[RMDB]
RNA sequence: GGGAACGACUCGAGUAGAGUCGAAAAGCAACUUAGGAUUUAAGGCUCCCCGUGCGUGUCUCGAACCAUGCCGGGCCAAACCCACGGGGGCUGGCGGUCCCCGUGCGGUCAAAAUCAAACCGCUGGAAAAACAGUUCUAGCUUCGGCUAGAACUGAACACACAUCCUACCUUCGGGUAGGAUGUGUGAAAAGAAACAACAACAACAAC
Reactivity to 2A3 in 0.01 (KOAc 150mM, MgCl2 10mM, bicine 150mM(pH8.5), 24C), signal-to-noise 2, nucleotides 027 to 156: g020c000a000a150c110u100u140a140g050g190a290u240u130u060a000a000g020g000c010u070c000c030c000c000g090u150g040c030g000u020g040u010c110u110c230g050a050a050c010c000a020u020g000c000c000g010g000g000c040c010a100a110a000c000c020c000a000c000g000g000g000g000g000c000u000g000g000c000g000g000u020c000c000c020c000g020u000g000c070g030g020u010c020a010a010a030a190u130c080a180a100a030c000c000g000c070u090g030g010a130a110a010a000a010c000a000g000u000u000c000u000a020g000c000u000u080c200g090g000c000u000a000g000a000a000c000u000g000a000a000